[RMDB]
RNA sequence: GGGAACGACUCGAGUAGAGUCGAAAAGGAAGUGGUCUGGGACGGCCCGCCGCAGACGGUGAGAGUCCGGUACGCGAAAAUCCGACACCUGUCUCGUACUUCAUCCCGAGUAGCAGCGGGCUCGUGGAACGCUUAAUGCCUUCGGGCAUUAAGCGUUAAAAGAAACAACAACAACAAC
Reactivity to DMS in 0.01 (KOAc 150mM, MgCl2 10mM, bicine 150mM(pH8.5), 24C), signal-to-noise 1, nucleotides 027 to 126: g010g000a070a040g050u000g020g000u000c090u000g030g030g010a100c090g010g020c010c010c020g030c000c050g010c010a130g010a090c060g010g000u000g010a140g000a150g010u000c070c030g000g000u000a020c140g050c140g000a100a060a180a140u010c070c010g000a120c030a030c050c030u000g010u010c010u000c160g020u000a050c040u010u000c070a090u000c000c000c000g000a110g010u010a110g020c070a020g030c000g000g010g000c020u000c030g010u000g030g020